[RMDB]
The record gives the reactivity of an RNA of 177 nucleotides to DMS and 2A3. Conditions: 150 mM KOAc, 10 mM MgCl2 and 150 mM bicine (pH 8.5), 24 C. It was measured as part of the RMDB library M2PK50. For 2A3 the reverse transcriptase was SuperScript II with manganese. The 2A3 profile rests on 978 reads.

RNA sequence: GGGAACGACUCGAGUAGAGUCGAAAAGGCGACAAGUUCGCUUGUCGCCACGGGGUGCAGCCUGGAAAGGCUGGAGGUAUUGGAAUGGUCGGGCCGCCAUUCAACGCGGGACAUUCGUGUCCCGCAAAUAACCUUAAGGCUUCGGCCUUAAGGUUAUAAAAGAAACAACAACAACAAC
Reactivity to DMS in 0.01 (KOAc 150mM, MgCl2 10mM, bicine 150mM(pH8.5), 24C), signal-to-noise 2, nucleotides 027 to 126: g030g010c000g000a000c000a000a030g020u000u000c190g000c000u000u000g000u010c000g000c000c010a010c100g030g010g000g020u020g000c020a050g010c000c000u000g000g080a130a190a030g010g010c010u000g010g000a090g010g010u010a080u000u020g010g010a020a010u000g000g010u010c060g010g000g030c010c070g000c010c000a060u010u000c020a140a120c220g000c000g000g000g000a030c000a040u000u000c140g010u000g000u000c000c000c000g010c000a000a010
Reactivity to 2A3 in 0.01 (KOAc 150mM, MgCl2 10mM, bicine 150mM(pH8.5), 24C), signal-to-noise 1, nucleotides 027 to 126: g030g010c000g000a000c020a020a000g020u030u040c130g080c200u010u010g010u000c000g010c010c000a030c050g000g010g030g090u130g020c020a000g040c000c010u050g120g030a150a090a000g000g060c020u020g040g030a030g000g040u110a110u220u300g060g020a030a010u060g030g000u030c090g070g020g050c000c000g080c000c020a000u000u000c010a030a030c120g020c020g010g040g000a000c000a010u060u100c150g000u020g000u010c000c010c000g000c000a010a000